[RMDB]
RNA sequence: GGGAACGACUCGAGUAGAGUCGAAAAUAAUGUUUGCUCCAUGAUCUAUUAUCGUGUUGAUGAAUCGCUUCUCGGCGUACAUCUUAGUGUACCUCUUUGUCUCGUAAUAAUUGUUUUCGUGGAAAAAUGAUAUGUGUCUACAGUAGUAAUGAAGAGACCAAUUAUCCCUUUUCGAAGGGAUAAUUGGAAAAGAAACAACAACAACAAC
Reactivity to 2A3 in 0.01 (KOAc 150mM, MgCl2 10mM, bicine 150mM(pH8.5), 24C), signal-to-noise 6, nucleotides 027 to 156: u130a000a070u070g030u030u060u090g040c020u000c020c010a020u030g020a060u020c070u090a070u130u060a050u130c070g020u030g050u120u090g020a030u020g030a090a110u110c020g020c040u130u100c080u130c140g000g020c010g010u000a020c000a000u030c040u060u090a070g020u040g030u100a080c020c010u060c040u040u100u070g040u000c030u010c040g030u020a050a040u040a090a050u080u060g090u060u090u040u050c040g010u060g020g000a050a070a010a040a020u070g060a030u020a050u130g060u020g020u000c030u050a050c030a050g060u140a020g030u030a070a100u080g040a060a040g040a000g010a030
Reactivity to DMS in 0.01 (KOAc 150mM, MgCl2 10mM, bicine 150mM(pH8.5), 24C), signal-to-noise 4, nucleotides 027 to 156: u010a080a110u010g010u000u000u000g020c040u010c020c020a020u000g010a040u000c040u000a070u000u010a070u000c040g050u010g010u000u000g000a090u000g020a080a100u000c060g010c050u000u000c040u000c060g010g020c070g050u000a050c030a040u010c100u010u000a090g030u000g010u000a040c030c020u000c030u010u000u010g020u000c010u000c050g020u000a080a070u000a040a050u010u000g020u010u010u000u000c030g030u000g010g000a030a070a050a080a060u000g020a070u000a060u000g030u000g010u000c030u000a050c040a070g030u000a100g020u000a050a090u010g000a060a050g000a150g020a250